The data come from the RNA Mapping Database (RMDB), library RNAMAK.
This 207-nucleotide RNA was probed chemically with 2A3.
[RMDB]
RNA sequence: GGGAACGACUCGAGUAGAGUCGAAAAGCGUACUACUGCGAGGUACAAGGAGGUAUAUCCCGUGGUCCCAAAUAGGACCACAGGGAUGCGAACUUGUACUACCCACCGCAGUAUCGCAAAACCCUAUGCUGCUGAGUUCGCUCAGCAGCAUAGGGAACAAUGGCGACAUCUUCGGAUGUCGCCAUUGAAAAGAAACAACAACAACAAC
Reactivity to 2A3 in 0.01 (KOAc 150mM, MgCl2 10mM, bicine 150mM(pH8.5), 24C), signal-to-noise 2, nucleotides 027 to 156: g010c010g030u100a120c080u000a000c000u040g030c000g020a010g070g000u020a030c010a010a000g070g010a090g150g080u180a220u040a000u200c000c000c000g010u000g030g020u060c020c000c000a170a300a080u280a120g000g000a000c000c030a000c030a030g000g000g000a000u010g020c010g000a030a000c000u010u000g010u000a000c000u010a010c000c050c010a020c010c010g000c000a040g000u010a090u300c010g000c010a010a050a090a190c000c000c000u000a000u020g010c020u000g000c010u000g000a000g000u120u150c280g110c140u000c000a000g020c000a010g000c000a000u000a000g000g010g000a000a000
The reactions ran in a buffer of 150 mM KOAc, 10 mM MgCl2 and 150 mM bicine (pH 8.5), at 24 C. The 2A3 profile rests on 1,125 reads. For 2A3 the reverse transcriptase was SuperScript II with manganese. Values cover nucleotides 27 to 156.